The record gives the reactivity of an RNA of 207 nucleotides to 2A3. The reactions ran in a buffer of 150 mM KOAc, 10 mM MgCl2 and 150 mM bicine (pH 8.5), at 24 C. The 2A3 profile rests on 3,100 reads. The data come from the RNA Mapping Database (RMDB), library RNAMAK.

RNA sequence: GGGAACGACUCGAGUAGAGUCGAAAAGGGGUCAGUACAACAGCGUCCACUGAGCAUCGAUCUACACUGAAGCCUCCACGGUGUAGGGAGCUCAUGUGGACGACAUGUACUGACGGAGGCACCCAAACAAAUCUCGCUCCUUCGGGAGCGAGAUUUGGCUAGCAAUAGGCUUCGGCCUAUUGCUAGCAAAAGAAACAACAACAACAAC
Reactivity to 2A3 in 0.01 (KOAc 150mM, MgCl2 10mM, bicine 150mM(pH8.5), 24C), signal-to-noise 3, nucleotides 027 to 156: g050g040g110g030u010c030a010g010u010a010c070a220a070c110a300g150c020g000u000c000c000a010c000u000g000a000g000c010a020u300c050g010a000u000c000u000a000c000a000c000u020g040a070a000g020c000c000u000c000c000a000c000g000g000u010g000u010a010g000g000g000a000g000c000u020c010a050u200g010u000g000g000a000c000g010a010c000a060u270g000u000a000c000u000g000a000c020g000g000a010g000g020c000a030c000c000c000a030a040a050c020a000a000a010u000c000u000c000g000c010u010c000c010u030u090c250g080g010g000a000g000c000g000a000g000a000u000u000u000g000